[RMDB]
The record gives the reactivity of an RNA of 177 nucleotides to DMS and 2A3. DMS adducts were read by reverse transcription with MarathonRT. For 2A3 the reverse transcriptase was SuperScript II with manganese.

RNA sequence: GGGAACGACUCGAGUAGAGUCGAAAAGACGGUAAAGAGCAUUGGAUCGUCGGAGGAGUUCUCCCAAGAAGAGAGAAGAGGAGACAAGAGGUGGACGAGGUCCCCAAGACGCUGGAGACACCCUUGGGUAUUGAGAGGUGUUCGCACCUCUCAAUACAAAAGAAACAACAACAACAAC
Reactivity to DMS in 0.01 (KOAc 150mM, MgCl2 10mM, bicine 150mM(pH8.5), 24C), signal-to-noise 2, nucleotides 027 to 126: g000a050c040g020g020u000a020a060a120g010a050g010c130a150u000u000g020g020a040u000c010g020u000c090g000g060a060g000g010a190g010u000u000c020u000c000c030c050a110a120g000a110a080g010a140g000a060g040a120a020g010a070g000g010a050g000a030c050a070a090g000a120g020g020u000g000g000a020c060g010a100g010g000u000c030c030c020c060a050a100g000a070c070g000c080u000g010g010a090g000a070c050a080c030c000c000u000u000g000g000
Reactivity to 2A3 in 0.01 (KOAc 150mM, MgCl2 10mM, bicine 150mM(pH8.5), 24C), signal-to-noise 1, nucleotides 027 to 126: g000a020c040g000g030u110a120a100a000g080a020g060c100a070u000u190g050g040a020u000c040g030u020c070g040g000a020g000g040a050g020u040u040c050u120c020c010c010a040a050g100a060a010g070a010g050a000g020a080a040g010a040g060g000a050g000a050c010a000a030g040a040g040g050u130g050g020a030c050g020a060g000g050u020c020c020c000c000a020a030g030a040c050g030c110u070g060g060a070g010a020c020a040c000c000c010u050u050g200g000